Overview
Structure probing data (DMS and 2A3) for a 177-nucleotide construct. The 2A3 profile rests on 18,988 reads. In probing experiments dimethyl sulfate is read out at A N1 and C N3, which are open when not base-paired. Conditions: 150 mM KOAc, 10 mM MgCl2 and 150 mM bicine (pH 8.5), 24 C.
RNA sequence: GGGAACGACUCGAGUAGAGUCGAAAAGAGUUCACGCUCCUGUUCGAAGCGGCCGCACAUCCUCGAUGGAGGGAGGCCCUCUCCUCCCUCAUGCAGCGGGUGGAGGAACAGGGUGUGUUCAGACUCCUGUCAUACAAUGUUUCGACAUUGUAUGACAAAAAGAAACAACAACAACAAC
Reactivity to DMS in 0.01 (KOAc 150mM, MgCl2 10mM, bicine 150mM(pH8.5), 24C), signal-to-noise 9, nucleotides 027 to 126: g010a100g010u000u000c020a020c020g010c000u010c010c010u000g010u000u000c040g020a170a120g030c130g010g020c030c030g020c140a300c110a090u000c010c040u000c130g000a140u010g010g000a020g000g000g000a300g010g000c130c040c050u000c060u000c000c000u000c000c000c000u000c030a080u010g020c180a170g010c210g000g000g030u000g000g010a120g010g000a010a020c020a000g000g010g010u000g010u000g000u000u000c020a060g000a160c130u000c010c030
Reactivity to 2A3 in 0.01 (KOAc 150mM, MgCl2 10mM, bicine 150mM(pH8.5), 24C), signal-to-noise 6, nucleotides 027 to 126: g060a010g010u010u010c010a000c010g010c020u170c040c010u000g010u020u010c020g050a080a020g050c110g110g030c030c010g070c020a090c010a160u100c010c050u080c080g170a170u230g190g010a010g000g020g010a030g020g000c020c040c010u020c000u000c000c010u000c010c010c000u010c010a030u130g040c020a010g010c030g020g070g010u020g000g030a080g000g040a000a000c000a000g010g000g000u010g000u000g000u000u010c020a020g050a070c030u010c010c010

For DMS, 11,289 sequencing reads were counted.